Structure probing data (2A3 and DMS) for a 177-nucleotide construct. The RNA was probed in 150 mM KOAc, 10 mM MgCl2 and 150 mM bicine (pH 8.5) at 24 C. Reactivities are given for positions 27 through 126. For 2A3, 36,285 sequencing reads were counted. For DMS the reverse transcriptase was MarathonRT. The data come from the RNA Mapping Database (RMDB), library OK1LIB. Reactivities are rounded to 0.1 and cut off at 0 and 3.
RNA sequence: GGGAACGACUCGAGUAGAGUCGAAAAGCUCCGUCGGCAUCAGCUUUGGUAGUGAGGAAACACGCGAUACUUCUGUAUAACAACAACCAAUAGGCCUCGUCUUGCAGAACGCUCCGUCAGGGACAUCGAGCCUAAUUAAAUUCGUUUAAUUAGGCUCAAAAGAAACAACAACAACAAC
Reactivity to 2A3 in 0.01 (KOAc 150mM, MgCl2 10mM, bicine 150mM(pH8.5), 24C), signal-to-noise 9, nucleotides 027 to 126: g030c020u020c030c010g060u060c030g040g030c020a080u040c040a090g040c040u080u080u090g060g020u070a090g030u030g090a050g040g080a060a080a010c070a020c050g050c040g040a040u040a130c030u060u110c030u080g110u070a080u130a180a070c080a040a010c020a020a050c040c020a080a100u060a160g050g000c010c010u030c020g050u010c030u030u090g010c010a020g020a130a030c020g010c020u010c020c000g060u050c040a040g040g010g040a030c020a090u120c110
Reactivity to DMS in 0.01 (KOAc 150mM, MgCl2 10mM, bicine 150mM(pH8.5), 24C), signal-to-noise 9, nucleotides 027 to 126: g010c040u010c010c030g020u020c050g020g010c060a040u010c080a080g010c050u000u010u000g010g010u010a050g030u010g010a100g000g000a080a080a080c070a070c080g020c100g000a070u000a050c040u010u010c070u010g010u010a050u010a080a090c150a080a090c150a070a100c060c030a070a080u020a060g010g000c010c010u000c060g010u010c030u000u010g000c080a060g010a050a090c080g010c050u000c040c030g000u010c040a060g000g000g000a070c110a070u030c130